Chemical mapping of a 177-nucleotide RNA with DMS and 2A3.
Values are in units of 0.01, from 0 to 300, in steps of 10.
RNA sequence: GGGAACGACUCGAGUAGAGUCGAAAACACGCCGGAGAACAUGGACACCCUGGCCGAUCGGGCCGCGAAUUACCUCAGCGGUGAUUUCGCGGCUCAGUACCGCAGAUUCGUCGACCAGAUCGCCGCAGAACAGUCCUUCUUUCGAGAAGGACUGUUCAAAAGAAACAACAACAACAAC
Reactivity to DMS in 0.01 (KOAc 150mM, MgCl2 10mM, bicine 150mM(pH8.5), 24C), signal-to-noise 2, nucleotides 027 to 126: c060a140c100g000c010c000g000g000a110g000a090a060c080a080u010g020g010a080c050a110c020c040c010u000g000g000c030c020g000a060u040c150g010g000g030c000c000g010c010g000a000a010u000u000a000c000c000u000c130a120g000c230g000g000u000g000a010u000u010u010c030g010c000g000g050c000u000c010a010g000u030a130c120c030g000c030a060g000a080u000u030c000g000u000c100g000a080c040c020a060g000a080u010c020g000c020c010g000c070a090
Reactivity to 2A3 in 0.01 (KOAc 150mM, MgCl2 10mM, bicine 150mM(pH8.5), 24C), signal-to-noise 6, nucleotides 027 to 126: c060a020c020g020c020c020g040g010a120g020a060a030c030a110u110g020g020a030c010a030c020c000c030u020g040g030c010c040g020a030u120c050g000g010g000c000c000g000c000g000a000a010u010u010a010c010c010u130c110a100g100c140g100g020u010g010a000u080u150u110c000g000c000g000g010c000u000c000a000g000u030a020c000c030g020c020a010g010a140u060u090c020g030u020c010g070a050c000c020a010g010a060u050c040g020c050c010g050c050a010